The record gives the reactivity of an RNA of 177 nucleotides to DMS and 2A3. The reactions ran in a buffer of 150 mM KOAc, 10 mM MgCl2 and 150 mM bicine (pH 8.5), at 24 C. For DMS, 853 sequencing reads were counted.
RNA sequence: GGGAACGACUCGAGUAGAGUCGAAAACGACAGAGUUCCUUCCUGGCGCCACUCGAAUCGAAGGGGCUUCCUAGCUGCCUCACCCACCUGCAGAGAGACGGAGGGGGGCUGCUGGGUGUCUGGGACGGUAAGAGCACGGAUUCGUCCGUGCUCUUACAAAAGAAACAACAACAACAAC
Reactivity to DMS in 0.01 (KOAc 150mM, MgCl2 10mM, bicine 150mM(pH8.5), 24C), signal-to-noise 1, nucleotides 027 to 126: c120g000a060c130a110g020a120g000u000u000c010c040u000u000c030c030u000g000g010c130g000c070c090a030c010u010c120g020a070a090u010c100g020a090a050g050g000g020g010c090u000u000c020c000u010a010g010c010u000g020c000c000u000c010a200c030c010c010a060c000c020u000g020c130a170g010a170g010a180g030a090c200g010g000a270g020g000g010g000g000g000c030u010g000c000u000g000g010g000u000g010u010c040u030g020g000g010a090c150g040
Reactivity to 2A3 in 0.01 (KOAc 150mM, MgCl2 10mM, bicine 150mM(pH8.5), 24C), signal-to-noise 1, nucleotides 027 to 126: c050g060a000c020a060g160a000g010u050u060c010c000u010u020c030c030u010g040g000c020g020c050c010a050c020u040c010g120a160a250u130c040g070a070a070g020g010g020g060c050u140u060c020c010u030a000g000c020u020g000c000c000u040c030a280c020c010c020a130c020c000u080g000c080a050g120a020g000a000g060a300c070g010g010a010g040g010g000g020g000g000c020u010g000c010u030g020g070g010u030g030u000c030u020g030g020g040a020c040g050